[RMDB]
RNA sequence: GGGAACGACUCGAGUAGAGUCGAAAAUACGCCAAUUUCGAUUGGCGUAACACGCAAACCGGCCGAAAGGCAUUUUAUGCCUACGGUGGCGAAAGCCUAAAAACGCACUGUCAUUCGUGACAGUGAAAUUCGGGAAGCUAUUCGUAGCUUCCCGAAUAAAAGAAACAACAACAACAAC
Reactivity to DMS in 0.01 (KOAc 150mM, MgCl2 10mM, bicine 150mM(pH8.5), 24C), signal-to-noise 2, nucleotides 027 to 126: u000a000c020g000c000c010a000a020u000u030u000c170g000a040u010u000g020g000c000g010u000a000a070c160a090c090g020c070a050a120a210c000c010g000g010c020c010g000a030a110a050g000g020c000a010u000u000u010u010a020u000g010c020c000u020a240c000g000g030u000g010g000c010g010a090a120a160g000c000c030u000a040a020a040a070a120c270g000c030a010c000u010g050u010c000a000u000u020c160g010u000g000a000c000a010g000u000g000a020a040
Reactivity to 2A3 in 0.01 (KOAc 150mM, MgCl2 10mM, bicine 150mM(pH8.5), 24C), signal-to-noise 2, nucleotides 027 to 126: u020a010c000g000c000c010a010a010u040u040u090c180g110a030u000u010g010g000c010g000u010a010a010c070a000c000g070c080a070a050a090c000c000g030g050c020c010g130a180a050a010g000g010c020a010u040u060u050u080a060u060g000c000c000u010a020c010g000g010u050g000g010c010g080a140a010a000g000c010c030u100a130a070a040a000a000c050g000c010a000c010u010g000u000c010a010u030u030c130g120u020g000a000c010a000g030u000g010a030a020
Chemical mapping of a 177-nucleotide RNA with DMS and 2A3.
Conditions: 150 mM KOAc, 10 mM MgCl2 and 150 mM bicine (pH 8.5), 24 C.
Reactivities are given for positions 27 through 126.
Source: RMDB library M2PK50, as collected in RNAgym.